Conditions: 150 mM KOAc, 10 mM MgCl2 and 150 mM bicine (pH 8.5), 24 C. This 207-nucleotide RNA was probed chemically with DMS and 2A3. The 2A3 profile rests on 1,662 reads.
[RMDB]
RNA sequence: GGGAACGACUCGAGUAGAGUCGAAAACGCUGGGUCAGGUCAGAAGCUGUGUUGUCAGAGGAGACUUUACUGAAGCGCGCACGGUAAAGUCUCCUCUUGGAUUUACACAGACUUCUACUGACCUGUGCUGAAGCGCGCACGGCAACCGAAAGGUGCGGUGACUAAAGGAGUUCGCUCCUUUAGUCACAAAAGAAACAACAACAACAAC
Reactivity to DMS in 0.01 (KOAc 150mM, MgCl2 10mM, bicine 150mM(pH8.5), 24C), signal-to-noise 1, nucleotides 027 to 156: c030g050c010u010g020g000g000u010c050a040g040g030u000c110a060g010a080a090g060c000u000g020u000g050u000u000g010u010c080a110g010a000g000g010a070g020a040c000u000u000u010a030c000u010g010a070a120g030c030g030c000g040c080a300c000g000g010u010a000a010a010g020u010c010u000c000c000u000c000u000u050g050g030a130u000u000u000a020c010a050c010a040g000a110c000u000u000c010u000a050c010u000g030a020c000c000u030g000u000g010c030u010g040a110a090g000c010g000c010g010c010a290c040g000g000c020a080a130c010c030g000a100a110a210g020g000u000g010c000g000
Reactivity to 2A3 in 0.01 (KOAc 150mM, MgCl2 10mM, bicine 150mM(pH8.5), 24C), signal-to-noise 2, nucleotides 027 to 156: c040g000c020u040g000g000g000u000c020a010g090g070u170c140a010g020a010a000g000c010u000g010u020g040u070u090g100u180c060a010g000a000g010g000a000g000a030c020u050u000u000a000c010u000g040a210a150g050c060g000c020g020c080a020c000g000g020u000a000a000a000g000u000c000u010c010c000u010c020u000u000g000g000a000u070u030u070a010c000a000c010a030g080a230c000u000u000c000u010a000c000u000g000a000c010c000u000g000u010g010c040u030g020a140a020g010c010g000c000g010c040a030c010g040g020c020a070a020c030c000g090a160a050a010g060g010u000g000c020g060